This 170-nucleotide RNA was probed chemically with DMS and 2A3. For DMS, 138,393 sequencing reads were counted. The RNA was probed in 150 mM KOAc, 10 mM MgCl2 and 150 mM bicine (pH 8.5) at 24 C. 2A3 adducts were read by reverse transcription with SuperScript II with manganese.
RNA sequence: GGGAACGACUCGAGUAGAGUCGAAAAUGUCCACCUUCGAGGGGGUUCACACCUCCAGGCGGCGGGCCGGCUACUCUUCUUUUCCUUUUCUCGUCUUCCUCGGUCAGCCUCCUGAGUUCCUCUUCUUCAACAUCCUAGUUCGCUAGGAUGAAAAGAAACAACAACAACAAC
Reactivity to DMS in 0.01 (KOAc 150mM, MgCl2 10mM, bicine 150mM(pH8.5), 24C), signal-to-noise 9, nucleotides 027 to 129: u070g020u040c030c000a100c060c030u030u040c120g050a100g000g020g000g010g010u040u040c200a090c150a130c060c020u010c020c040a040g020g040c120g000g000c040g020g000g010c010c000g010g020c060u050a060c070u010c040u050u010c030u040u030u010u040c040c040u020u030u040u030c070u010c060g010u000c070u030u020c060c020u020c010g020g000u030c020a040g000c050c030u010c000c000u030g000a140g000u000u000c010c010u010c120u010u020c020u030u030c080a090a160
Reactivity to 2A3 in 0.01 (KOAc 150mM, MgCl2 10mM, bicine 150mM(pH8.5), 24C), signal-to-noise 9, nucleotides 027 to 129: u170g050u010c010c000a040c030c010u070u120c070g040a140g000g010g010g000g010u190u180c090a060c030a040c070c010u020c030c000a020g020g000c010g010g000c000g000g020g000c010c000g030g010c020u100a080c030u040c010u130u060c020u050u080u050u080c010c000u080u060u080u050c060u010c020g090u010c010u080u040c010c010u030c000g010g000u010c010a000g010c000c000u010c000c010u010g010a020g010u010u010c000c000u040c000u040u010c000u040u030c020a100a110